[RMDB]
RNA sequence: GGGAACGACUCGAGUAGAGUCGAAAAUUCAAUUAUUGAAAUAUUGUGAGUAAUAUAUUCCAAUCCCAACUUUUGUCCAGUUGGGCGGCGGAAGAACGUUCUCUUUGAGGGCAUUGAAACGGUAUGGAUUCGUAACCUUCUUCGGAAGGUUACGAAUAAAAGAAACAACAACAACAAC
Reactivity to DMS in 0.01 (KOAc 150mM, MgCl2 10mM, bicine 150mM(pH8.5), 24C), signal-to-noise 2, nucleotides 027 to 126: u020u000c050a070a120u030u060a100u080u010g010a100a060a040u050a050u000u000g000u000g000a170g000u030a050a020u030a100u010a030u020u010c000c010a080a300u040c000c000c000a000a040c010u000u030u030u030g030u000c150c180a050g000u010u010g010g010g000c030g020g040c300g000g000a050a020g020a050a190c110g040u000u000c030u000c000u030u070u020g010a030g030g000g050c020a060u010u020g010a070a030a080c100g000g030u050a030u030g010g010
Reactivity to 2A3 in 0.01 (KOAc 150mM, MgCl2 10mM, bicine 150mM(pH8.5), 24C), signal-to-noise 1, nucleotides 027 to 126: u040u040c020a000a000u040u090a150u130u280g070a020a060a010u220a100u030u060g070u010g140a060g070u140a110a030u060a030u000a050u190u180c000c040a000a070u030c000c000c000a000a000c000u000u030u090u080g060u140c000c060a000g000u000u000g000g030g000c000g060g000c020g000g000a010a000g000a070a000c020g000u010u000c000u000c000u100u040u110g100a140g000g050g040c000a000u010u150g020a100a000a000c020g090g000u100a100u040g150g000